[RMDB]
RNA sequence: GGGAACGACUCGAGUAGAGUCGAAAAGAUAUGGAAUCCCGUUUCCGAAGAACUAGUCAGGUUCGGAAACGAACCUGAGCUAGGGAGGAAUCGGGAUUCCUAAGUCAAAGUGGGCUUCGGCCCACAACAAUACAAUCAUGUUCGCAUGAUUGUAUUGAAAAGAAACAACAACAACAAC
Reactivity to DMS in 0.01 (KOAc 150mM, MgCl2 10mM, bicine 150mM(pH8.5), 24C), signal-to-noise 9, nucleotides 027 to 126: g010a050u000a300u000g010g000a020a010u000c010c000c000g000u000u000u000c000c000g010a150a160g010a190a200c000u000a010g010u000c020a010g010g010u000u000c010g010g000a090a090a230c000g010a010a000c010c000u000g010a060g020c000u000a000g010g000g010a110g020g000a020a010u010c010g020g000g000a000u000u000c000c000u010a010a070g010u000c040a110a110a160g010u000g010g010g020c000u000u010c230g030g010c000c000c000a000c010a030a090
Reactivity to 2A3 in 0.01 (KOAc 150mM, MgCl2 10mM, bicine 150mM(pH8.5), 24C), signal-to-noise 5, nucleotides 027 to 126: g010a020u080a050u180g010g000a000a010u010c020c000c010g010u000u000u010c120c030g240a300a060g020a080a040c000u000a000g030u030c000a000g000g000u010u000c000g020g000a050a060a010c000g000a000a010c000c000u020g020a050g100c000u000a000g000g010g010a050g010g000a000a000u000c000g000g040g000a000u000u000c000c000u000a000a000g000u010c010a020a050a140g010u010g010g010g000c020u090u140c300g190g000c020c000c010a000c000a000a010
Chemical mapping of a 177-nucleotide RNA with DMS and 2A3.
Conditions: 150 mM KOAc, 10 mM MgCl2 and 150 mM bicine (pH 8.5), 24 C.
The DMS profile rests on 23,814 reads.
The 2A3 profile rests on 34,642 reads.